[RMDB]
RNA sequence: GGGAACGACUCGAGUAGAGUCGAAAAGGACUCCGUGAGGAGUCCGUGCAGCGAGAGCUGCACAAGGGCUAAGUGACAGUCGGUGCCCCUCCUCUACGAUGUUGAGUAGAGGAGAGUAGUCGUCUCACGAUUUAUAGUGAGACUGACAUGACUGUGGAUCAAUCAACUCAUUCGUGAGUUGAUUGAUAAAAGAAACAACAACAACAAC
Reactivity to 2A3 in 0.01 (KOAc 150mM, MgCl2 10mM, bicine 150mM(pH8.5), 24C), signal-to-noise 4, nucleotides 027 to 156: g000g000a000c000u000c010c010g040u050g020a030g000g000a000g000u000c000c000g000u000g010c010a000g000c000g020a070g010a010g070c000u010g030c000a000c020a000a040g020g000g000c020u120a100a030g090u050g180a010c000a000g000u000c000g030g080u100g000c000c000c000c000u000c010c000u000c000u000a000c000g080a080u090g040u200u070g060a020g030u000a000g000a000g000g000a000g000a000g000u030a010g000u000c010g000u010c000u000c000a000c000g040a060u030u300u160a210u190a050g000u000g000a000g000a000c010u010g000a000c000a010u070g000a000c000u000g000u000g010g010
Reactivity to DMS in 0.01 (KOAc 150mM, MgCl2 10mM, bicine 150mM(pH8.5), 24C), signal-to-noise 3, nucleotides 027 to 156: g060g000a010c000u000c000c010g010u010g000a220g030g010a020g010u000c000c010g010u000g000c010a030g020c000g000a300g000a300g020c000u000g000c000a010c020a060a050g010g000g020c010u000a110a300g000u010g020a050c020a020g010u000c010g020g010u000g000c000c000c010c010u000c000c000u000c000u010a020c000g000a180u000g020u000u010g010a300g020u000a000g020a010g010g010a010g010a020g010u000a050g030u000c000g010u000c000u000c000a000c020g000a280u000u010u000a160u010a170g020u000g000a040g000a010c000u020g050a010c000a050u010g010a040c020u000g030u000g000g010